[RMDB]
RNA sequence: GGGAACGACUCGAGUAGAGUCGAAAACUCCGGUUCGCCGGAGAAACCGACCUGGCCCAGACCUCAGCCCCAUAGCUGAUGGGCUGAGUCAGGGGCCAAGGCUCCCCAAAAGAUGAGUUCGCUCAUCGUAAAGGAAUCAGUUCGCUGAUUCCUUUACAAAAGAAACAACAACAACAAC
Reactivity to 2A3 in 0.01 (KOAc 150mM, MgCl2 10mM, bicine 150mM(pH8.5), 24C), signal-to-noise 1, nucleotides 027 to 126: c010u000c000c010g000g020u030u040c200g060c110c020g010g000a010g000a040a000a000c030c010g060a130c040c010u000g010g010c000c000c000a000g010a010c000c020u010c000a000g000c000c000c000c060a070u170a070g050c060u080g040a120u100g010g010g040c000u010g000a010g000u000c020a010g000g000g010g000c020c010a000a000g000g000c010u030c000c000c000c000a070a090a050a030g020a000u010g000a000g040u030u140c200g000c080u010c000a000u000c050
Reactivity to DMS in 0.01 (KOAc 150mM, MgCl2 10mM, bicine 150mM(pH8.5), 24C), signal-to-noise 2, nucleotides 027 to 126: c000u000c000c000g000g010u000u010c220g020c010c000g040g010a010g000a010a070a140c070c030g010a150c010c010u000g000g020c000c010c010a020g000a030c090c050u010c000a020g010c020c010c040c110a120u000a140g020c250u010g000a300u000g010g000g040c010u000g010a010g010u010c130a080g000g020g000g030c010c010a020a020g010g000c090u000c020c000c010c170a060a110a070a120g010a010u000g000a040g010u000u000c200g000c000u000c000a010u000c020